Structure probing data (DMS and 2A3) for a 177-nucleotide construct. Values cover nucleotides 27 to 126.
RNA sequence: GGGAACGACUCGAGUAGAGUCGAAAAACGGUUUAAUCGCUGUGGCCUACUCUUAUACAGAAUGGAAUCCUAGUGUACAGUGGUAUAAGUAAGCUGUGCAUUCGCUAUGUUUAGGUUUAGAAUGUAGCUAUGUUGUGAUUUUCGAAUCACAACAUAGAAAAGAAACAACAACAACAAC
Reactivity to DMS in 0.01 (KOAc 150mM, MgCl2 10mM, bicine 150mM(pH8.5), 24C), signal-to-noise 9, nucleotides 027 to 126: a040c020g000g000u000u010u000a120a080u010c210g000c010u000g020u000g010g010c020c010u000a140c030u000c010u000u000a020u000a030c020a020g000a130a090u010g010g010a150a110u010c030c030u000a060g010u000g010u000a010c000a010g020u000g010g010u000a040u000a020a030g000u000a040a090g000c000u000g000u000g010c000a030u010u010c160g010c030u000a020u000g010u000u000u000a090g010g010u000u010u000a110g010a030a020u000g010u000a020g010
Reactivity to 2A3 in 0.01 (KOAc 150mM, MgCl2 10mM, bicine 150mM(pH8.5), 24C), signal-to-noise 9, nucleotides 027 to 126: a000c020g010g030u030u050u070a050a040u100c030g000c020u030g010u040g070g030c010c000u020a050c000u010c000u030u040a040u030a070c030a040g160a210a190u190g040g060a050a020u080c000c030u070a050g010u000g010u020a000c010a010g010u010g050g040u070a060u020a120a040g080u020a030a000g000c000u000g000u010g010c010a010u050u060c060g000c050u050a030u090g050u020u050u060a100g050g050u050u030u050a090g040a090a050u100g010u040a010g020